[RMDB]
RNA sequence: GGGAACGACUCGAGUAGAGUCGAAAACCAAUGGGAAACCAUUGGCAACUCGGAAACGAGUUGAACAGGUAAUUAGCCAAAAAUCCUGCGACAAUGCGAUUUUAAGCAUUGUCGAUUACGCCCAUGUCGAUUUUAAGACAUGGAGCGAAUUUGGCAAGGUUCGUUGUCCGUUCGCGGACGAUGAACCAAAAGAAACAACAACAACAAC
Reactivity to 2A3 in 0.01 (KOAc 150mM, MgCl2 10mM, bicine 150mM(pH8.5), 24C), signal-to-noise 2, nucleotides 027 to 156: c000c000a000a000u000g000g000g020a020a010a040c000c000a000u000u000g000g010c000a000a000c000u000c000g020g000a050a050a040c010g000a000g000u000u000g010a050a010c000a000g000g010u010a020a080u070u140a110g000c010c000a000a000a000a000a010u000c000c000u000g000c000g000a000c000a000a010u000g000c010g110a140u020u080u090u300a080a010g000c000a000u000u000g000u000c000g000a010u010u010a080c020g000c020c000c000a000u000g010u000c020g040a120u000u090u120u300a240a090g000a000c000a000u000g000g000a070g000c000g000a000a020u250u110u030g000g000c000a100a120
An RNA of 207 nucleotides, treated with 2A3 and read out base by base. The RNA was probed in 150 mM KOAc, 10 mM MgCl2 and 150 mM bicine (pH 8.5) at 24 C. The 2A3 profile rests on 4,131 reads.